[RMDB]
RNA sequence: GGGAACGACUCGAGUAGAGUCGAAAAGGAAGCAGGCAGCGCGGGGCUGCUGGUGGUGGUGGAGGAGGAUGAAGUUCGCCAUUCAAACAACCCUUUCUGCACCGGUCCUGUGCUGCCCGUUGCCUGCAGAAAAGGGAUUAUUCGUAAUCCCUUUUCUAAAAGAAACAACAACAACAAC
Reactivity to 2A3 in 0.01 (KOAc 150mM, MgCl2 10mM, bicine 150mM(pH8.5), 24C), signal-to-noise 9, nucleotides 027 to 126: g050g010a030a000g010c010a010g010g000c000a000g000c010g010c020g020g020g020g000c040u130g010c040u020g030g020u040g020g130u070g010g050u110g030g070a040g020g010a030g020g020a030u060g040a050a020g050u090u120c080g070c110c030a060u050u050c030a040a120a120c030a050a110c020c000c010u020u070u050c030u060g020c000a000c000c010g010g060u280c000c000u020g000u020g010c020u010g010c000c000c000g000u000u010g050c000c000u020g020c030
Reactivity to DMS in 0.01 (KOAc 150mM, MgCl2 10mM, bicine 150mM(pH8.5), 24C), signal-to-noise 7, nucleotides 027 to 126: g010g010a060a040g010c020a030g000g020c000a010g000c000g010c020g010g000g010g000c040u030g010c090u020g010g010u000g010g020u010g010g010u010g000g000a030g010g000a130g000g010a190u000g000a060a050g000u010u010c120g010c080c090a150u000u000c040a030a060a170c110a110a170c140c010c010u000u010u010c010u000g000c010a020c010c010g000g000u000c010c010u010g010u000g010c020u000g000c000c000c010g010u000u010g000c000c000u000g000c140